[RMDB]
RNA sequence: GGGAACGACUCGAGUAGAGUCGAAAAGCAUCGACGACGGUCCUGCCAUGAGACCGUAACGAGGACAUGUCGCCUCGAAUGGUGUCGGGGAGCCGGCAGCUUACCCCAAGGAUGAGCGCCUAAUGCCUAUACCCGAUUCGCUUCGGCGAAUCGGGAAGGUACAGACAAACUUCGGUUUGUCUGUACCAAAAGAAACAACAACAACAAC
Reactivity to 2A3 in 0.01 (KOAc 150mM, MgCl2 10mM, bicine 150mM(pH8.5), 24C), signal-to-noise 2, nucleotides 027 to 156: g020c010a080u040c010g140a110c050g010a000c010g000g000u020c000c000u040g140c110c040a180u150g020a020g010a040c010c000g020u030a030a110c010g000a000g010g020a030c060a150u220g030u240c130g000c010c000u000c010g020a020a050u110g000g000u060g060u040c030g000g010g000g000a030g100c070c040g010g000c020a030g000c000u040u070a100c000c000c000c010a050a040g090g010a090u120g010a010g040c000g010c060c050u120a080a020u100g020c000c000u090a110u050a110c010c000c000g000a000u000u010c000g000c000u010u030c120g110g020c000g000a000a000u000c000g000g000g000a000a000
The data come from the RNA Mapping Database (RMDB), library M2RFPK. This 207-nucleotide RNA was probed chemically with 2A3.